[RMDB]
RNA sequence: GGGAACGACUCGAGUAGAGUCGAAAAGCAAAACACAAGUCAUAUCCUCACACAAGAGAACAUUUCCUUGGGAUCUGGUUGGGUGGAGCCCACACCAAUUCACUCCUCAUACUGGUUCUAAAAUUAAAACUGGUAUAAGGUUCGCCUUAUACCAGUUAAAAGAAACAACAACAACAAC
Reactivity to DMS in 0.01 (KOAc 150mM, MgCl2 10mM, bicine 150mM(pH8.5), 24C), signal-to-noise 5, nucleotides 027 to 126: g010c080a070a060a080a080c070a040c060a040a060g010u000c050a050u000a120u010c030c010u000c080a080c110a120c090a090a100g000a070g010a060a060c060a090u000u010u010c020c040u000u000g010g000g010a050u000c080u000g010g010u010u010g000g010g030u010g010g010a150g020c030c020c020a070c080a070c040c040a050a090u000u000c040a070c060u000c020c030u000c060a050u010a080c090u000g000g000u000u000c040u000a040a050a080a080u000u010a040a040
Reactivity to 2A3 in 0.01 (KOAc 150mM, MgCl2 10mM, bicine 150mM(pH8.5), 24C), signal-to-noise 3, nucleotides 027 to 126: g020c010a020a060a090a030c070a020c020a020a060g030u080c010a020u030a040u140c000c000u080c020a020c010a010c010a060a030g050a010g040a120a040c010a120u040u090u060c010c000u040u030g050g000g000a030u020c040u050g040g010u050u040g020g040g000u040g060g060a070g040c020c030c000a030c000a010c010c000a010a010u110u050c020a020c050u030c010c010u020c010a030u050a170c030u040g050g000u050u020c030u080a110a110a070a100u150u160a150a300